Notes: This 177-nucleotide RNA was probed chemically with 2A3 and DMS.
RNA sequence: GGGAACGACUCGAGUAGAGUCGAAAAGAUAUGGAGAACCUACCCACCGAAGAAUGUCCUAUGAAGUGUGGAGCCUCGGAAACGAGGCUCCACAUGGAGGACAUUAUUCGAGGGUUCUCCUAAGUCACAGUAGUAAAAACUUCGGUUUUUACUACUGAAAAGAAACAACAACAACAAC
Reactivity to 2A3 in 0.01 (KOAc 150mM, MgCl2 10mM, bicine 150mM(pH8.5), 24C), signal-to-noise 1, nucleotides 027 to 126: g050a040u300a220u290g000g010a040g000a000a020c030c000u190a300c080c010c000a010c010c020g000a020a020g080a020a020u040g000u000c010c020u300a300u280g090a080a000g010u020g000u040g010g000a010g000c000c000u050c000g040g040a000a070a050c040g020a020g000g020c040u010c000c000a000c040a000u000g010g000a000g000g020a000c000a010u000u010a010u000u010c010g030a020g040g010g000u010u000c010u000c000c000u000a040a010g110u120c080a000
Reactivity to DMS in 0.01 (KOAc 150mM, MgCl2 10mM, bicine 150mM(pH8.5), 24C), signal-to-noise 2, nucleotides 027 to 126: g010a110u000a190u010g000g000a040g020a010a010c000c000u000a180c080c030c060a300c140c000g000a000a000g010a010a020u000g010u000c000c000u000a300u010g010a060a300g000u000g010u000g020g000a010g020c010c000u000c000g020g000a050a060a190c020g010a020g020g020c000u000c010c000a000c000a000u000g000g010a000g000g010a010c000a000u000u000a010u000u000c000g000a090g010g020g010u000u000c000u000c000c000u000a020a050g000u000c130a140
Overview:
DMS adducts were read by reverse transcription with MarathonRT. Source: RMDB library TTRINS, as collected in RNAgym. The 2A3 profile rests on 1,419 reads.